The record gives the reactivity of an RNA of 177 nucleotides to DMS.
For DMS, 1,231 sequencing reads were counted.
Values cover nucleotides 27 to 126.

RNA sequence: GGGAACGACUCGAGUAGAGUCGAAAAGUUACACCAUUCGUCGGCCACGAUUUUGACGUUCGAACCCAGUUUUUCCAGGUUGUGGGUGAUUUCGGUUAACAGACGGAUUUGGUCUGGUUUAUUGCCCCGUCCAGCUCAUAUUCGUAUGAGCUGGACGAAAAGAAACAACAACAACAAC
Reactivity to DMS in 0.01 (KOAc 150mM, MgCl2 10mM, bicine 150mM(pH8.5), 24C), signal-to-noise 1, nucleotides 027 to 126: g010u000u010a080c150a110c000c020a100u000u000c020g000u000c000g000g010c050c070a070c060g000a100u000u000u000u000g030a060c070g010u000u000c070g020a040a100c040c030c040a100g000u000u000u000u000u000c060c070a100g010g000u000u000g000u000g000g000g020u000g010a080u030u000u030c040g000g010u010u010a050a060c110a100g000a040c000g010g000a180u010u000u000g020g010u000c000u010g010g020u020u020u000a100u040u020g010c020c000c000